RNA sequence: GGGAACGACUCGAGUAGAGUCGAAAACCUACUCAAUACGUCCUCGUCGUACAGAACGGUAACAUGAUUUCCGAACAUCCGCGCUUGGGUAUACGAGUAUACACCUUACCCAACCCUCGCCAACGGGAGUGCAUCCACGAGUUCGCUCGUGGAUGAAGUGAAUACGCUAGUUCGCUAGCGUAUUCACAAAAGAAACAACAACAACAAC
Reactivity to 2A3 in 0.01 (KOAc 150mM, MgCl2 10mM, bicine 150mM(pH8.5), 24C), signal-to-noise 5, nucleotides 027 to 156: c000c000u020a030c060u060c040a070a090u080a090c020g050u050c010c010u040c030g090u040c030g030u060a070c030a090g090a160a050c020g050g010u130a070a020c040a140u180g050a230u090u040u020c010c010g010a040a030c040a110u040c020c040g020c010g000c070u030u040g000g000g040u030a020u020a100c110g000a030g060u020a020u060a050c080a090c030c050u100u120a060c010c010c020a010a060c010c000c010u030c020g010c010c020a070a060c030g020g000g020a040g040u100g040c000a000u000c000c010a000c010g000a000g010u070u090c200g040c060u000c000g000u010g000g000a000u000g000a010a000
Reactivity to DMS in 0.01 (KOAc 150mM, MgCl2 10mM, bicine 150mM(pH8.5), 24C), signal-to-noise 1, nucleotides 027 to 156: c030c000u000a060c030u010c040a080a100u010a100c010g020u000c000c000u000c020g050u010c090g020u010a140c050a100g010a110a130c000g040g040u000a110a120c090a140u010g010a140u000u000u000c010c010g040a110a110c020a060u000c010c020g010c040g020c020u000u000g010g070g000u010a040u000a070c100g000a100g010u000a020u000a070c090a050c100c080u000u000a030c000c030c010a120a090c040c000c080u010c160g030c000c010a050a090c040g010g030g000a090g050u000g020c000a000u000c010c030a010c000g000a040g000u000u020c300g040c010u000c010g030u010g000g000a020u010g010a060a150
An RNA of 207 nucleotides, treated with 2A3 and DMS and read out base by base. The 2A3 profile rests on 3,914 reads. It was measured as part of the RMDB library M2RFPK. For 2A3 the reverse transcriptase was SuperScript II with manganese. The reactions ran in a buffer of 150 mM KOAc, 10 mM MgCl2 and 150 mM bicine (pH 8.5), at 24 C.